[RMDB]
RNA sequence: GGGAACGACUCGAGUAGAGUCGAAAAGAUAUGGAAUAGUAGAGCAUUGUGAACUACCAGUACUCGGAAACGAGUACGGCACAAUUAAGCCUAUUCCUAAGUCAAAACGCAGGGUUCGCCCUGCGAACGGAUACAUACAGUUCGCUGUAUGUAUCCGAAAAGAAACAACAACAACAAC
Reactivity to 2A3 in 0.01 (KOAc 150mM, MgCl2 10mM, bicine 150mM(pH8.5), 24C), signal-to-noise 6, nucleotides 027 to 126: g020a020u100a030u180g000g000a000a010u010a000g070u070a090g030a020g190c110a020u010u030g010u010g010a150a190c130u140a100c300c080a100g010u000a000c000u000c000g010g000a030a070a050c020g000a000g000u000a000c000g010g020c010a000c010a010a030u080u100a070a000g030c000c000u000a010u010u000c010c000u010a160a030g050u020c030a020a020a090a090c010g000c000a000g030g000g020u070u140c210g150c020c000c000u000g000c000g000a000a000
Reactivity to DMS in 0.01 (KOAc 150mM, MgCl2 10mM, bicine 150mM(pH8.5), 24C), signal-to-noise 5, nucleotides 027 to 126: g000a050u000a300u010g010g010a000a000u000a000g020u010a100g010a100g030c260a020u000u000g000u010g000a080a080c140u010a270c070c010a110g020u000a000c000u000c010g000g000a080a070a180c000g010a010g010u000a000c000g000g000c010a010c020a010a010u000u000a070a120g000c100c000u000a010u000u000c000c000u010a030a140g000u000c020a060a070a070a150c010g010c000a000g020g010g000u000u000c240g010c000c000c000u000g020c010g010a010a070